[RMDB]
RNA sequence: GGGAACGACUCGAGUAGAGUCGAAAAGAUUAUGUGGGAGAUGCGCCCUGUCGUGUCACUGGAAACAGAAUUGCGAGUCGCUCGCGCUAGCGAUAUUGAUGUGUACUGUAGCGUACACUGUGCUACUUUAAGGUAUUAUGACGAUACCACGUCAAAAACUGAUGGUCGUAUUCGUACGACCAUCAGUAAAAGAAACAACAACAACAAC
Reactivity to DMS in 0.01 (KOAc 150mM, MgCl2 10mM, bicine 150mM(pH8.5), 24C), signal-to-noise 1, nucleotides 027 to 156: g000a110u010u000a050u000g060u000g010g030g010a130g000a040u000g020c000g040c030c160c090u000g000u000c030g000u000g000u000c070a110c060u010g050g020a080a080a250c120a110g030a110a070u000u000g000c000g010a080g030u020c020g030c040u000c020g020c020g000c090u010a040g000c060g010a080u020a180u000u020g000a100u000g000u000g030u010a010c030u000g050u020a140g080c040g020u010a060c060a050c070u010g030u010g000c010u010a100c050u020u000u000a070a140g000g010u000a020u000u000a110u010g000a140c080g050a150u000a080c040c060a100c040g010u010c050a030a040a030a050
Reactivity to 2A3 in 0.01 (KOAc 150mM, MgCl2 10mM, bicine 150mM(pH8.5), 24C), signal-to-noise 3, nucleotides 027 to 156: g040a070u260u160a040u200g140u120g000g010g030a100g000a010u000g040c020g020c000c070c160u090g130u140c020g000u020g020u040c020a000c100u020g040g090a100a030a080c010a010g070a090a180u040u140g000c040g010a020g030u000c010g010c020u000c010g080c040g010c040u030a020g010c000g050a020u000a020u100u180g070a040u090g050u070g010u030a050c020u040g100u190a040g080c010g040u040a040c010a000c030u020g090u110g060c030u000a050c000u060u010u080a150a060g020g000u090a050u060u010a050u160g050a000c040g000a000u000a030c030c000a030c020g040u060c000a010a010a010a010